Overview:
Chemical mapping of a 177-nucleotide RNA with DMS and 2A3. For 2A3 the reverse transcriptase was SuperScript II with manganese. The data come from the RNA Mapping Database (RMDB), library OK2TRN. Values cover nucleotides 27 to 126. DMS adducts were read by reverse transcription with MarathonRT. Conditions: 150 mM KOAc, 10 mM MgCl2 and 150 mM bicine (pH 8.5), 24 C.
[RMDB]
RNA sequence: GGGAACGACUCGAGUAGAGUCGAAAACGGACUGACUCCAUGGCUUCAUUCUCAUGCGUGUGUUUGUGCUUUCCUUUCCAGCUUACGGACAGCUGCACAGGGUGAAAAAAGGUUGAGGUAAAGGCGCGUCUCACCUACUAUUCGUAGUAGGUGAGACAAAAGAAACAACAACAACAAC
Reactivity to DMS in 0.01 (KOAc 150mM, MgCl2 10mM, bicine 150mM(pH8.5), 24C), signal-to-noise 2, nucleotides 027 to 126: c120g010g000a070c020u000g000a120c050u000c020c040a080u010g020g040c050u000u000c080a100u000u000c030u010c040a070u000g010c100g020u010g010u000g010u020u010u000g040u010g000c060u010u010u010c050c000u000u000u000c050c020a090g000c070u000u000a150c110g010g010a070c130a070g000c040u000g000c050a060c140a070g020g010g010u000g000a000a040a050a110a090a040g000g010u010u000g000a020g000g010u000a030a040a100g000g030c070g030c130
Reactivity to 2A3 in 0.01 (KOAc 150mM, MgCl2 10mM, bicine 150mM(pH8.5), 24C), signal-to-noise 1, nucleotides 027 to 126: c040g010g050a010c030u050g020a030c020u000c040c010a030u060g060g000c040u050u020c040a070u150u040c030u010c030a050u140g030c050g050u060g000u000g040u050u090u110g030u040g030c000u000u050u050c010c000u010u110u120c040c010a030g010c060u060u120a030c040g060g000a030c000a010g000c000u030g000c070a020c050a040g050g030g000u100g000a030a020a020a000a030a020g060g000u050u030g000a040g080g010u070a140a020a040g080g000c040g000c040